[RMDB]
RNA sequence: GGGAACGACUCGAGUAGAGUCGAAAAAAAUUAUGGUCGCCGGCACGUAUGUGCACACCGAGAAUGACACUCUUUCGCCGUCAACCGUGUCGGUAGUCUAGCACAUCAGGAAUCCGUCUGCGUUGAAAUUUUAGACAGAGUUCGCUCUGUCUAAAAUAAAAGAAACAACAACAACAAC
Reactivity to 2A3 in 0.01 (KOAc 150mM, MgCl2 10mM, bicine 150mM(pH8.5), 24C), signal-to-noise 1, nucleotides 027 to 126: a080a000a000u290u130a140u100g040g020u030c010g000c010c000g000g020c020a020c020g040u150a100u210g070u080g000c020a020c030a000c000c070g020a000g110a170a110u170g060a020c000a020c080u050c010u000u250u180c060g000c080c010g040u070c000a030a090c120c030g040u010g010u000c020g000g000u000a010g000u000c020u030a020g040c020a010c000a080u060c000a000g100g000a050a050u010c000c010g020u000c020u040g010c020g040u040u040g050a090a110
Reactivity to DMS in 0.01 (KOAc 150mM, MgCl2 10mM, bicine 150mM(pH8.5), 24C), signal-to-noise 3, nucleotides 027 to 126: a030a050a080u010u000a050u010g010g000u000c010g010c030c030g020g000c030a040c040g010u000a060u010g010u000g020c020a110c080a050c140c060g000a070g010a070a090u000g010a110c140a140c100u000c070u000u000u010c090g010c070c050g020u000c070a060a050c160c040g010u000g000u000c010g020g010u000a040g010u000c060u010a090g000c080a060c080a050u010c070a050g000g000a090a060u000c040c030g010u000c020u000g000c070g000u000u000g000a050a090